Chemical mapping of a 207-nucleotide RNA with 2A3. The reactions ran in a buffer of 150 mM KOAc, 10 mM MgCl2 and 150 mM bicine (pH 8.5), at 24 C. Values cover nucleotides 27 to 156.

RNA sequence: GGGAACGACUCGAGUAGAGUCGAAAAAUGUGAAACUCACUCUGCAGUGUGGAUACAUAAUGCUUGGAAAACAACUAUCACAAAAUGUAGUUUUGAAAAUUUUAAAGGUUCAGCUGUUUGGUACUCAGAUAAAAGUGACUUUUGGCAUGCUAUGAAAACCGCUCUAUGAUUUCGAUCAUAGAGCGGUAAAAGAAACAACAACAACAAC
Reactivity to 2A3 in 0.01 (KOAc 150mM, MgCl2 10mM, bicine 150mM(pH8.5), 24C), signal-to-noise 2, nucleotides 027 to 156: a000u080g020u000g000a120a040a000c010u010c020a030c000u060c060u060g040c030a010g030u000g010u030g060g030a030u030a080c040a020u150a120a070u130g000c070u060u010g030g020a010a160a000a050c020a000a030c010u050a040u140c040a030c040a130a070a070a070u140g000u020a060g010u010u030u000u130g140a190a080a030a050u240u230u100u170a070a150a000g030g020u020u030c040a000g010c020u010g070u040u060u080g010g040u030a030c030u060c100a020g030a100u090a050a090a000a040g020u020g030a020c040u080u080u050u020g010g000c000a030u010g010c060u160a050u190g030a000a240a000